[RMDB]
RNA sequence: GGGAACGACUCGAGUAGAGUCGAAAAUGACGUCGUUUCGACGACGUCAACAUAAAAUCAGCGGUAAAUUAUUAGGAGGCGUUACCGCUGAACGCCUCCAUACGAGAGGGCUAUUCGUAGCCCUCAACUAGCACAUCGUGUUCGCACGAUGUGCUAGAAAAGAAACAACAACAACAAC
Reactivity to DMS in 0.01 (KOAc 150mM, MgCl2 10mM, bicine 150mM(pH8.5), 24C), signal-to-noise 1, nucleotides 027 to 126: u000g010a000c030g080u000c010g000u000u000u010c160g020a020c010g010a000c000g030u000c000a030a050c100a090u020a030a050a210a070u000c010a000g010c000g000g000u030a030a000a100u000u000a030u030u030a080g010g010a010g000g000c000g000u010u000a050c070c010g000c000u000g030a030a000c030g000c010c000u010c000c070a080u000a000c250g040a170g000a010g010g000g050c010u000a050u000u010c140g050u010a050g020c040c000c010u000c010a000a120
Reactivity to 2A3 in 0.01 (KOAc 150mM, MgCl2 10mM, bicine 150mM(pH8.5), 24C), signal-to-noise 2, nucleotides 027 to 126: u080g000a000c000g000u020c000g010u000u000u120c160g030a010c000g000a000c010g010u000c000a000a000c010a020u160a010a100a010a050u030c020a000g030c010g030g190u170a050a080a110u190u190a140u090u300a270g020g000a000g000g000c010g000u020u040a140c000c000g020c000u010g000a000a000c000g000c000c000u010c000c010a030u130a050c170g050a140g000a000g100g000g020c000u030a020u080u080c250g060u000a010g000c000c000c000u000c000a000a000
Overview:
An RNA of 177 nucleotides, treated with DMS and 2A3 and read out base by base. It was measured as part of the RMDB library M2PK50. 2A3 adducts were read by reverse transcription with SuperScript II with manganese. The reactions ran in a buffer of 150 mM KOAc, 10 mM MgCl2 and 150 mM bicine (pH 8.5), at 24 C. Values cover nucleotides 27 to 126.